Source: RMDB library OK1LIB, as collected in RNAgym. Structure probing data (2A3 and DMS) for a 177-nucleotide construct.

[RMDB]
RNA sequence: GGGAACGACUCGAGUAGAGUCGAAAAUCGCGGGACUCCUCGGGACAACCACAGCGACUGGGAUCGUCAUCUCGGCUAGUUCGCGUGACCGGGAGAUCCGAGCAGAGGCAUAGCGAACUGCGCACGGCGGGACCGGCUGCUUCGGCAGUCGGUCCUGAAAAGAAACAACAACAACAAC
Reactivity to 2A3 in 0.01 (KOAc 150mM, MgCl2 10mM, bicine 150mM(pH8.5), 24C), signal-to-noise 3, nucleotides 027 to 126: u060c020g010c030g030g000g060a020c020u010c020c030u110c120g000g040g070a080c090a060a010c050c010a020c000a040g050c000g000a010c000u020g030g030g000a080u040c030g090u030c080a070u040c090u020c020g010g010c030u020a020g000u070u050c000g000c000g010u010g010a100c000c020g000g000g000a020g010a030u000c000c000g020a040g000c060a010g010a020g040g050c030a050u100a020g020c000g030a020a040c020u010g000c030g000c010a020c020g020g010
Reactivity to DMS in 0.01 (KOAc 150mM, MgCl2 10mM, bicine 150mM(pH8.5), 24C), signal-to-noise 3, nucleotides 027 to 126: u010c040g040c020g000g000g000a060c000u000c000c000u020c010g000g010g000a120c160a020a120c250c050a030c080a070g090c030g020a050c020u000g000g000g000a050u000c220g010u040c130a200u000c030u020c020g010g060c070u020a020g000u040u000c000g030c020g010u020g010a120c020c000g030g000g000a080g000a080u000c030c000g020a110g000c050a050g020a040g010g030c050a070u020a050g000c040g000a080a050c000u030g000c030g000c070a110c130g000g010

The 2A3 profile rests on 2,747 reads. The DMS profile rests on 4,395 reads. The reactions ran in a buffer of 150 mM KOAc, 10 mM MgCl2 and 150 mM bicine (pH 8.5), at 24 C.